RNA sequence: GGGAACGACUCGAGUAGAGUCGAAAACGUCCUCUAUCUUCUUGAGUUUCUUCUUUGUCUUCCGGAGGUCUCUCUCGAGUUCCUCUAACUUCUUUCUUCCGGCCACCCACUGCUCGAGGAUCUCUUCUCUCCCUCCGCGGUUCUUCCUCGACUCGGAGUGUUAAAUACGGUUCGCCGUAUUUAACACAAAAGAAACAACAACAACAAC
Reactivity to 2A3 in 0.01 (KOAc 150mM, MgCl2 10mM, bicine 150mM(pH8.5), 24C), signal-to-noise 1, nucleotides 027 to 156: c020g070u080c010c000u010c060u080a160u050c020u120u050c040u090u150g050a080g060u110u020u060c040u070u040c000u060u190u210g060u050c060u050u020c080c050g130g000a070g000g070u050c020u000c010u080c000u040c090g010a030g040u100u040c020c000u040c020u020a090a070c020u070u120c040u030u070u020c000u080u050c010c040g100g000c000c020a040c040c030c000a060c050u040g000c000u020c040g000a010g080g060a110u010c030u010c000u100u040c050u020c000u000c060c010c010u000c000c000g040c010g000g030u040u000c010u060u010c040c000u050c030g020a010c000u020c020g000g010a040